[RMDB]
Conditions: 150 mM KOAc, 10 mM MgCl2 and 150 mM bicine (pH 8.5), 24 C. Chemical mapping of a 177-nucleotide RNA with DMS. For DMS, 617 sequencing reads were counted.
RNA sequence: GGGAACGACUCGAGUAGAGUCGAAAAUGAGGAAACUAUGACUGGCCUGUAAAGCGGAACUUGUUUCAGGUUUAAAUAGCCCGGACAGUUAGGGCAGGGUUGGGGAAACAAGCAAAAUGAAGGAACCAACAUGGCCUCAAUUCGUUGAGGCCAUGUUAAAAGAAACAACAACAACAAC
Reactivity to DMS in 0.01 (KOAc 150mM, MgCl2 10mM, bicine 150mM(pH8.5), 24C), signal-to-noise 1, nucleotides 027 to 126: u010g060a060g010g000a150a080a110c150u010a110u000g020a110c060u000g010g000c000c000u050g080u010a050a080a110g060c110g000g000a060a070c050u010u020g000u000u000u000c010a050g000g000u000u000u010a050a130a080u000a100g020c010c020c000g050g000a050c090a110g010u000u010a030g020g000g020c020a060g000g020g020u000u000g000g000g010g000a050a110a110c090a080a130g020c170a040a050a040a090u020g010a080a070g020g000a070a120c120c150